[RMDB]
RNA sequence: GGGAACGACUCGAGUAGAGUCGAAAAGAUAUGGAGCAACUACCCACCUUUAGAAGGCACUUGGACCAACUUCGCUUCGGAAACGAAGCGAAGUUGCUAGUGCCCUAAAGAGGUUGCUCCUAAGUCAUCUGCAUGUUUAGUUCGCUAAACAUGCAGAAAAAGAAACAACAACAACAAC
Reactivity to DMS in 0.01 (KOAc 150mM, MgCl2 10mM, bicine 150mM(pH8.5), 24C), signal-to-noise 1, nucleotides 027 to 126: g000a110u000a110u000g000g000a030g000c000a020a010c000u030a170c020c000c040a300c160c000u000u000u000a000g000a140a070g010g000c000a000c020u000u020g010g010a210c300c090a000a100c000u000u000c000g020c010u000u010c000g020g000a120a040a260c030g000a000a010g020c000g000a000a030g010u000u000g010c040u000a000g000u000g000c030c000c000u000a000a000a020g020a110g020g010u000u000g000c000u000c010c000u000a000a070g000u010c140a060
Chemical mapping of a 177-nucleotide RNA with DMS. The data come from the RNA Mapping Database (RMDB), library TTRINS. DMS adducts were read by reverse transcription with MarathonRT. The DMS profile rests on 678 reads. Conditions: 150 mM KOAc, 10 mM MgCl2 and 150 mM bicine (pH 8.5), 24 C.